Structure probing data (2A3 and DMS) for a 207-nucleotide construct.
The data come from the RNA Mapping Database (RMDB), library OK3TST.
Values cover nucleotides 27 to 156.
RNA sequence: GGGAACGACUCGAGUAGAGUCGAAAAAGGAUUACAAUCAUAUCCAUUCGAUAAAGUGAUAAUUGAAUUCACAAACGUAUUCAAUGGUAACCUAGAAAUUGACUAUAUGGACUUAAGUGGAAAAUGGCACACAUUACAAGUAGAAAAUAUGCAAGCAAGUGGAGUGUUAAUUCGUUAACACUCCACUAAAAGAAACAACAACAACAAC
Reactivity to 2A3 in 0.01 (KOAc 150mM, MgCl2 10mM, bicine 150mM(pH8.5), 24C), signal-to-noise 3, nucleotides 027 to 156: a000g070g000a040u120u120a110c080a050a090u080c030a060u090a010u050c020c020a020u050u110c050g030a070u080a100a110a030g040u070g020a050u090a170a090u080u060g040a020a030u050u050c040a030c100a220a200a090c140g010u020a010u030u020c010a000a010u010g000g040u030a010a030c000c020u020a040g080a070a120a060u090u050g030a040c020u010a010u010a070u290g000g020a010c050u120u080a140a040g020u070g000g080a010a010a030a060u070g020g000c010a000c000a000c010a120u010u200a040c030a100a010g010u020a010g040a020a010a010a100u090a030u100g040c060a020a060g000c000a040
Reactivity to DMS in 0.01 (KOAc 150mM, MgCl2 10mM, bicine 150mM(pH8.5), 24C), signal-to-noise 2, nucleotides 027 to 156: a030g040g020a130u000u000a190c060a130a100u040c110a160u000a130u000c020c010a150u000u000c080g020a030u010a040a130a100g000u000g020a040u000a050a040u000u000g000a040a030u010u000c040a290c090a110a090a180c120g000u010a010u000u000c020a010a010u000g000g000u000a000a020c000c010u000a130g000a040a070a030u000u000g010a090c060u010a120u000a100u000g020g020a110c080u000u000a040a050g050u000g010g020a010a050a030a040u000g030g010c010a050c030a050c040a080u000u020a060c030a020a040g000u010a070g000a070a060a040a100u000a090u020g000c080a010a090g030c020a050